[RMDB]
RNA sequence: GGGAACGACUCGAGUAGAGUCGAAAAACGGAGGCUACGGCCUCCGAACACCGCGAUGAAACGGGAGGUUGCCGCCAUUUUGGCAGGAAAUUUCCGUGGAGUAUGUCCAAACUUGGAUUUGGGCGAAUAUAACUUUUACUUUCGAGUAAAAGUUAUAAAAAGAAACAACAACAACAAC
Reactivity to DMS in 0.01 (KOAc 150mM, MgCl2 10mM, bicine 150mM(pH8.5), 24C), signal-to-noise 9, nucleotides 027 to 126: a090c010g000g010a010g010g010c000u000a090c200g030g000c000c000u000c000c000g000a020a040c080a220c010c010g000c180g010a040u010g010a230a140a020c000g000g010g000a010g000g010u010u010g000c020c010g010c010c000a160u020u010u030u020g010g010c010a090g020g000a030a040a050u010u000u000c000c000g010u000g000g000a240g010u020a060u030g010u000c000c000a010a010a010c020u030u030g020g000a190u000u000u000g000g000g000c000g000a090a110
Reactivity to 2A3 in 0.01 (KOAc 150mM, MgCl2 10mM, bicine 150mM(pH8.5), 24C), signal-to-noise 9, nucleotides 027 to 126: a000c000g000g000a000g000g010c010u030a030c250g140g000c000c000u000c000c000g000a010a000c010a030c000c020g030c060g100a100u120g030a040a040a010c010g020g030g000a020g090g070u090u100g080c000c010g000c010c020a120u110u150u170u280g060g000c100a130g020g030a020a030a020u020u020u000c000c000g010u030g010g000a040g020u100a110u220g010u000c000c000a000a000a030c080u180u290g100g030a170u200u010u010g000g000g000c010g020a070a010